[RMDB]
RNA sequence: GGGAACGACUCGAGUAGAGUCGAAAACCUACUCAAUACGUCCUCGUCGUACAGAACGGUAACAUGUUUUCCGAACAUCCGCGCUUGGGUAUACGAGUAUACACCUUUCCCAACCCUCGCCAACGGGAGUGCAUCCACGAGUUCGCUCGUGGAUGAAUACAGUCAAACGGUUCGCCGUUUGACUGUAAAAAGAAACAACAACAACAAC
Reactivity to DMS in 0.01 (KOAc 150mM, MgCl2 10mM, bicine 150mM(pH8.5), 24C), signal-to-noise 2, nucleotides 027 to 156: c010c000u000a040c000u000c040a120a120u000a040c050g000u000c040c000u000c000g020u000c090g020u000a140c000a090g010a090a210c030g000g020u000a070a120c080a090u020g010u010u000u000u010c020c040g000a140a100c070a110u010c030c000g010c030g020c010u000u010g000g010g030u000a070u000a030c060g000a090g030u010a120u010a050c090a100c060c030u010u000u000c030c020c000a090a090c050c000c030u000c070g050c070c110a050a070c060g000g000g000a060g000u000g000c020a030u000c010c000a030c000g000a040g070u000u000c300g040c020u000c010g090u000g000g010a000u000g000a040a170
Reactivity to 2A3 in 0.01 (KOAc 150mM, MgCl2 10mM, bicine 150mM(pH8.5), 24C), signal-to-noise 3, nucleotides 027 to 156: c000c000u010a010c020u030c000a020a120u070a140c060g060u050c010c010u050c020g060u020c000g000u100a050c050a100g080a090a030c000g040g000u090a050a030c050a140u150g050u000u040u050u050c000c050g030a050a040c030a100u050c040c040g010c010g000c020u060u030g050g000g000u030a030u040a090c060g010a040g060u020a000u040a040c040a100c010c030u050u070u020c000c010c010a030a070c000c010c010u030c020g070c030c020a050a050c040g010g000g010a050g050u050g040c000a010u010c000c000a000c010g000a000g010u090u080c180g020c100u000c010g000u000g010g010a000u000g000a000a000